[RMDB]
RNA sequence: GGGAACGACUCGAGUAGAGUCGAAAACGUGAACAUCGCUCUGCUAAGUCCCGUCGUUCUUCCAGUCAGAGCGAGAUUGUAAGCAACCUUAUGCGCAAUGAAGACAUAGAGGGACUUCUUGAUGAAGGGACCAUAUAGCUUUCGAGCUAUAUGGUCCAAAAGAAACAACAACAACAAC
Reactivity to 2A3 in 0.01 (KOAc 150mM, MgCl2 10mM, bicine 150mM(pH8.5), 24C), signal-to-noise 3, nucleotides 027 to 126: c030g090u150g060a020a040c070a100u000c020g000c000u010c020u000g060c090u100a000a080g040u050c000c030c000g030u030c000g000u000u000c000u060u020c010c000a020g070u120c000a010g000a000g040c060g000a000g020a050u070u150g080u120a010a110g010c030a010a080c070c050u140u160a110u190g000c030g000c000a010a090u180g040a140a040g040a040c030a020u090a050g080a070g030g040g010a000c000u050u000c030u060u240g110a180u130g040a080a080g130
Reactivity to DMS in 0.01 (KOAc 150mM, MgCl2 10mM, bicine 150mM(pH8.5), 24C), signal-to-noise 2, nucleotides 027 to 126: c160g050u030g010a100a080c070a140u030c030g020c010u000c000u000g010c300u040a070a010g000u040c010c020c060g030u000c070g020u010u000c010u040u050c020c130a110g000u050c010a060g000a010g010c000g010a050g000a100u000u000g000u000a050a060g000c010a090a090c040c060u030u110a030u000g000c000g010c010a120a100u000g000a140a010g010a190c080a060u020a070g020a110g040g010g000a070c010u000u010c040u030u010g000a080u040g010a120a090g010